[RMDB]
RNA sequence: GGGAACGACUCGAGUAGAGUCGAAAAUGGAAGUGACUCCACAUUCCAGAAGCGGAAUUCCAUGACUCCAAACCCUGGGUAUCAGCCCAGUAUGAAUACCUCUGACAUGAUGGGGCGCAUGUCCUAUGAGCCAAAUAAGGAUCCUUAUGGCAGCAUGCUACCGUGUAUUGUUCGCAAUACACGGUAGAAAAGAAACAACAACAACAAC
Reactivity to 2A3 in 0.01 (KOAc 150mM, MgCl2 10mM, bicine 150mM(pH8.5), 24C), signal-to-noise 7, nucleotides 027 to 156: u050g010g010a020a030g050u030g110a160c040u050c050c030a050c030a130u090u020c050c020a040g040a100a020g070c080g010g040a040a050u060u020c040c020a050u110g060a070c040u030c070c000a050a060a110c050c010c010u000g020g020g000u110a200u300c050a090g090c000c010c000a010g020u040a080u150g070a040a020u090a130c010c010u050c030u040g020a020c010a050u100g040a150u060g040g000g010g010c010g000c010a040u050g040u050c000c020u070a080u110g030a010g000c010c020a040a120a100u090a070a020g070g020a130u130c010c010u060u060a050u070g020g000c010a020g030c030a010u110g020
Reactivity to DMS in 0.01 (KOAc 150mM, MgCl2 10mM, bicine 150mM(pH8.5), 24C), signal-to-noise 3, nucleotides 027 to 156: u000g010g000a070a080g010u000g000a090c040u000c020c020a050c030a140u020u000c050c050a120g030a090a100g010c050g000g030a080a170u000u000c040c060a100u010g000a090c040u010c020c010a080a100a100c100c060c010u000g020g030g030u000a120u000c260a130g030c010c000c010a050g000u000a030u000g020a130a110u000a050c040c010u000c010u010g000a100c050a070u000g010a080u000g020g010g020g000c040g000c080a060u000g000u000c020c030u010a080u010g000a110g050c010c040a020a110a110u000a110a110g040g020a090u000c060c030u000u010a090u010g010g000c010a070g040c070a130u000g010
An RNA of 207 nucleotides, treated with 2A3 and DMS and read out base by base.
Source: RMDB library OK3TST, as collected in RNAgym.
Conditions: 150 mM KOAc, 10 mM MgCl2 and 150 mM bicine (pH 8.5), 24 C.